[RMDB]
RNA sequence: GGGAACGACUCGAGUAGAGUCGAAAAAUUUAAGACAAACAUUGAUUGGAUGCUGUCAAAUAAGGGUUCCAUCAUGACUGGCCUAGGGGCAACCUCCCUUUUGUCAAAGAAAUGACUGCCGCACCUAAUCAGAGUAUGUGUUCGCACAUACUCUGAUAAAAGAAACAACAACAACAAC
Reactivity to 2A3 in 0.01 (KOAc 150mM, MgCl2 10mM, bicine 150mM(pH8.5), 24C), signal-to-noise 1, nucleotides 027 to 126: a000u140u170u110a070a030g050a000c000a000a140a010c020a030u050u150g100a110u150u160g140g020a020u080g050c040u010g030u030c020a010a070a100u100a050a120g080g000g000u070u000c070c000a000u040c010a020u050g090a040c030u000g090g000c020c010u020a030g050g000g020g040c050a070a050c000c000u050c010c000c000u010u050u020u040g030u000c000a000a000a130g110a030a060a000u070g000a020c060u020g030c020c010g000c000a010c000c000u050a040
Reactivity to DMS in 0.01 (KOAc 150mM, MgCl2 10mM, bicine 150mM(pH8.5), 24C), signal-to-noise 2, nucleotides 027 to 126: a080u000u000u000a070a140g000a100c070a060a070a140c070a060u000u000g000a150u010u010g010g010a060u000g020c050u000g010u010c070a050a050a070u000a050a070g010g000g000u000u000c060c010a060u010c020a060u010g010a080c110u010g020g020c020c070u000a050g000g000g010g000c120a050a060c110c030u010c020c030c000u010u000u000u000g000u000c060a050a090a110g010a080a070a050u000g000a040c080u010g000c030c050g010c100a070c040c070u020a060
Chemical mapping of a 177-nucleotide RNA with 2A3 and DMS. The RNA was probed in 150 mM KOAc, 10 mM MgCl2 and 150 mM bicine (pH 8.5) at 24 C. It was measured as part of the RMDB library OK2TST. For 2A3 the reverse transcriptase was SuperScript II with manganese.